[RMDB]
RNA sequence: GGGAACGACUCGAGUAGAGUCGAAAAGGGUGCAGUGAGCUUACGGUCACGGGUCUGAGGGUGUGGAUGAAUCCACACUUAACCUGUUGAUGCUCUGAAAGAAGUAGGAUACCAGCUGCAGCGUCUCUCCAUACACUAAUUUCGAUUAGUGUAUGGAAAAAGAAACAACAACAACAAC
Reactivity to DMS in 0.01 (KOAc 150mM, MgCl2 10mM, bicine 150mM(pH8.5), 24C), signal-to-noise 9, nucleotides 027 to 126: g010g010g010u000g000c020a030g020u000g010a110g010c020u000u000a080c160g020g010u000c010a030c020g000g010g010u000c170u010g030a140g010g000g020u000g020u000g000g010a070u010g010a170a130u000c000c000a010c000a010c000u000u000a060a040c010c010u000g010u010u010g010a030u000g010c070u000c060u010g010a080a120a110g000a080a110g010u000a050g000g010a120u010a080c090c060a180g000c020u000g010c020a040g010c050g000u000c020u000c050
Reactivity to 2A3 in 0.01 (KOAc 150mM, MgCl2 10mM, bicine 150mM(pH8.5), 24C), signal-to-noise 9, nucleotides 027 to 126: g070g030g030u020g000c010a010g010u020g060a030g030c020u070u070a040c070g070g000u010c010a000c010g010g010g010u030c110u170g100a220g040g070g030u030g010u010g010g010a040u100g190a080a200u030c000c000a000c000a000c000u010u020a010a010c000c000u020g040u110u070g020a020u060g030c030u020c050u130g140a130a080a070g070a080a020g040u070a020g040g060a040u080a170c030c030a030g000c010u010g000c000a030g070c030g060u000c010u000c010
Chemical mapping of a 177-nucleotide RNA with DMS and 2A3. Conditions: 150 mM KOAc, 10 mM MgCl2 and 150 mM bicine (pH 8.5), 24 C. The DMS profile rests on 80,118 reads. Source: RMDB library OK2TST, as collected in RNAgym.